[RMDB]
The record gives the reactivity of an RNA of 177 nucleotides to 2A3.
RNA sequence: GGGAACGACUCGAGUAGAGUCGAAAAAUGACAAGCAAUGAAGUUUGUCAUACCACAAUGAAACUAUAUUCACAUUUUGAAAUUGCUUUCAUAUAUGCAAAACACAUUACACUGGAUAUAGCAUUCGGGCUGAUCAGUAUUUCGAUACUGAUCAGCCAAAAGAAACAACAACAACAAC
Reactivity to 2A3 in 0.01 (KOAc 150mM, MgCl2 10mM, bicine 150mM(pH8.5), 24C), signal-to-noise 1, nucleotides 027 to 126: a020u020g010a010c000a000a000g000c030a000a130u300g080a300a130g040u030u000u000g010u020c000a000u000a010c000c040a100c040a020a120u210g010a040a070a000c000u000a000u010a000u070u000c000a030c030a150u000u040u060u020g030a090a080a070u000u030g030c000u000u210u300c170a040u180a040u040a010u200g010c010a000a000a240a000c020a000c000a040u000u140a100c080a030c070u010g000g000a000u010a010u010a060g070c100a060u100u060c000g140

Description
For 2A3, 797 sequencing reads were counted.